About this RNA: Conditions: 150 mM KOAc, 10 mM MgCl2 and 150 mM bicine (pH 8.5), 24 C. The record gives the reactivity of an RNA of 207 nucleotides to DMS and 2A3. For 2A3 the reverse transcriptase was SuperScript II with manganese. It was measured as part of the RMDB library RNAMAK. For DMS the reverse transcriptase was MarathonRT. For 2A3, 1,795 sequencing reads were counted.

RNA sequence: GGGAACGACUCGAGUAGAGUCGAAAAUACUAUGCUUCGGCAUAGUAAAAUUCUCCUAAGUCACGGUAUCUUGUCAGACGGGUAUCGGAAACGAUACUUUCGUCUUGGAUUUAGCCGAGCCGUGAUAUGGAAAAGUCAGGAAUAUUCGUAUUCCUAAAGACCUUCAAAAUUUCGAUUUUGAAGGUCUAAAAGAAACAACAACAACAAC
Reactivity to DMS in 0.01 (KOAc 150mM, MgCl2 10mM, bicine 150mM(pH8.5), 24C), signal-to-noise 1, nucleotides 027 to 156: u000a010c000u000a010u000g010c010u010u010c300g080g040c000a000u010a020g020u000a010a030a090a150u000u000c020u000c010c020u000a120a300g010u000c000a020c050g050g030u000a080u000c010u000u010g030u000c080a070g000a020c010g000g000g010u000a000u000c010g010g000a110a140a300c030g010a060u000a020c020u000u000u010c000g040u000c010u010u000g010g010a100u010u020u000a040g100c230c080g010a250g030c000c030g000u000g010a040u020a170u000g010g010a070a040a080a090g000u010c030a030g000g010a030a050u000a100u010u000c260g000u000a080u010u000c000c010u000a040a150
Reactivity to 2A3 in 0.01 (KOAc 150mM, MgCl2 10mM, bicine 150mM(pH8.5), 24C), signal-to-noise 3, nucleotides 027 to 156: u020a000c000u000a010u010g010c000u010u100c270g140g010c000a010u000a000g000u010a000a000a030a000u040u020c040u030c050c000u080a150a040g000u000c000a000c000g050g000u110a270u270c040u070u150g060u090c040a000g000a010c010g000g000g030u000a000u000c000g050g000a070a030a020c010g000a000u000a000c000u090u260u150c020g020u000c010u000u100g010g000a030u130u160u300a050g050c090c060g020a040g010c010c000g010u010g000a000u010a020u050g030g070a110a120a020a030g190u180c070a010g080g010a010a000u100a020u070u050c080g000u010a020u000u000c000c000u040a190a060